Structure probing data (DMS and 2A3) for a 177-nucleotide construct. For DMS the reverse transcriptase was MarathonRT. It was measured as part of the RMDB libraries RFM100 and RFMREP. The reactions ran in a buffer of 150 mM KOAc, 10 mM MgCl2 and 150 mM bicine (pH 8.5), at 24 C.
[RMDB]
RNA sequence: GGGAACGACUCGAGUAGAGUCGAAAAGUCUCCGAUCGGUCCUCCAGAGCGCGCGCCACCAUCGCCAAAGCCAGGUCGGCCUCCGCUCGGCUGCCGCCUCUCUACUACCCAUUACAAUGCUCGCCCACAAAUACGUAAAGUUCGCUUUACGUAUUUGAAAAGAAACAACAACAACAAC
Reactivity to DMS in 0.01 (KOAc 150mM, MgCl2 10mM, bicine 150mM(pH8.5), 24C), signal-to-noise 9, nucleotides 027 to 126: g010u010c020u010c010c030g000a090u010c060g000g000u000c020c010u000c050c050a100g010a090g010c070g010c080g020c150g000c020c020a070c050c030a050u010c080g000c040c060a060a100a130g010c040c060a080g010g010u000c060g020g000c030c020u010c060c060g010c040u000c060g010g000c040u000g010c050c040g000c030c010u000c030u000c020u000a050c070u000a100c020c010c010a080u010u020a060c110a060a090u020g010c040u000c040g010c000c010c010a150
Reactivity to 2A3 in 0.01 (KOAc 150mM, MgCl2 10mM, bicine 150mM(pH8.5), 24C), signal-to-noise 9, nucleotides 027 to 126: g040u010c010u000c040c010g040a080u060c030g010g050u020c000c010u040c010c020a040g010a030g060c040g000c010g000c010g020c020c000a040c010c010a060u070c030g020c030c020a080a040a010g030c020c010a030g020g040u060c040g030g010c000c010u020c010c010g030c030u040c030g020g000c020u030g020c010c010g010c000c000u010c000u010c000u020a050c010u040a040c010c000c000a040u070u060a060c070a070a040u090g010c010u030c040g030c000c000c000a050